[RMDB]
RNA sequence: GGGAACGACUCGAGUAGAGUCGAAAAAGGCAAGCUGCUUGCUGGGAACACAGUUCACCUUAAGCUUUAAAAAAAAUUCCUUCAAAGCCAAAAACCAUGCAAAUAUGGAGCUGCCUGACAAGCCGAACUUUGUUAGGCAUUUCGAUGCCUAACAAAGAAAAGAAACAACAACAACAAC
Reactivity to 2A3 in 0.01 (KOAc 150mM, MgCl2 10mM, bicine 150mM(pH8.5), 24C), signal-to-noise 1, nucleotides 027 to 126: a000g030g030c060a030a090g030c000u110g010c000u020u000g000c000u000g000g040g050a070a000c160a000c030a240g000u120u080c030a160c050c000u050u080a050a020g040c000u060u100u140a000a110a010a000a010a010a040a120u180u080c050c000u110u090c080a070a050a030g030c010c030a030a000a010a080a080c000c000a020u080g040c030a100a040a100u250a190u140g050g000a010g010c030u010g000c000c000u020g010a010c030a110a000g080c000c010g030a130a030
Reactivity to DMS in 0.01 (KOAc 150mM, MgCl2 10mM, bicine 150mM(pH8.5), 24C), signal-to-noise 2, nucleotides 027 to 126: a020g000g020c010a010a100g000c020u000g000c110u010u000g060c040u010g000g040g010a110a060c040a120c070a060g040u000u000c070a070c060c050u000u000a110a110g000c020u000u020u020a000a000a010a030a130a120a130a270u000u000c050c020u000u000c090a060a020a050g010c010c080a040a100a070a070a240c050c030a070u010g000c040a010a080a130u000a090u000g000g000a080g010c040u000g000c000c010u010g000a070c140a050a070g020c010c060g000a110a110